[RMDB]
RNA sequence: GGGAACGACUCGAGUAGAGUCGAAAAAAUCGCUGCUUGACGCAAUGUCGAGAAGAGAUGUCGGUUUCUGAGCAUUUGAUGAAUCCAAUUGGUAAUCAUUGUAGGUAGCCCAUGGUUUCGUGUGGCACGCAGGUAAAUAUUUCGAUAUUUACCUGCGAAAAGAAACAACAACAACAAC
Reactivity to 2A3 in 0.01 (KOAc 150mM, MgCl2 10mM, bicine 150mM(pH8.5), 24C), signal-to-noise 5, nucleotides 027 to 126: a000a010u080c040g000c030u060g010c000u020u000g010a020c010g060c290a220a210u290g020u040c020g010a010g010a090a030g040a010g020a020u070g080u110c060g040g030u000u060u020c030u040g020a020g020c020a060u040u120u180g080a060u050g000a050a060u010c020c000a070a260u130u170g020g010u060a050a030u050c030a050u010u130g070u100a080g060g060u050a040g020c020c000c000a020u050g020g080u060u070u160c050g000u090g010u150g120g020c060a020
Reactivity to DMS in 0.01 (KOAc 150mM, MgCl2 10mM, bicine 150mM(pH8.5), 24C), signal-to-noise 4, nucleotides 027 to 126: a080a020u000c010g020c010u000g000c010u000u000g010a030c020g000c220a160a090u010g010u000c010g010a020g000a070a020g000a030g000a010u000g000u010c110g020g010u010u000u010c020u000g010a130g000c030a090u000u000u020g010a030u000g000a120a110u020c030c020a150a140u010u010g010g010u010a120a050u000c030a050u000u010g000u000a120g020g020u000a130g000c020c000c030a050u010g000g010u000u010u000c030g010u000g020u000g000g000c050a250